[RMDB]
RNA sequence: GGGAACGACUCGAGUAGAGUCGAAAAGGCCGCCGCGGAGCUCCGAGCAGCGGUAGCGCCCCCCUGUAAAGCGGUUCGCUAUGCCGGGGCCACUGUGAACCCUGCCGCCUGCCGGAACACUCUUCGCCAAUAUAAGUUGGUUCGCCAACUUAUAUUGAAAAGAAACAACAACAACAAC
Reactivity to DMS in 0.01 (KOAc 150mM, MgCl2 10mM, bicine 150mM(pH8.5), 24C), signal-to-noise 3, nucleotides 027 to 126: g000g010c050c050g020c170c050g030c050g000g000a070g020c190u000c030c040g010a130g010c030a060g010c030g000g010u010a020g030c110g010c050c040c010c010c150c010u020g010u000a040a080a060g030c050g010g010u000u000c040g010c040u000a070u000g010c050c130g000g000g020g010c110c060a050c100u010g020u000g010a060a110c090c050c010u000g010c010c020g020c150c030u000g000c010c010g000g000a040a070c090a110c120u000c020u000u000c040g020c070
Reactivity to 2A3 in 0.01 (KOAc 150mM, MgCl2 10mM, bicine 150mM(pH8.5), 24C), signal-to-noise 2, nucleotides 027 to 126: g070g000c020c010g070c040c040g000c070g000g060a030g020c000u010c030c020g030a100g020c010a000g000c010g000g020u000a030g030c050g020c030c010c000c040c020c000u030g050u100a090a110a010g030c020g020g260u230u210c070g010c030u060a050u150g000c030c020g000g000g010g030c040c020a110c040u100g040u040g090a060a070c000c000c000u010g010c000c000g070c010c020u020g000c020c000g010g030a050a000c050a010c020u080c020u020u060c010g000c040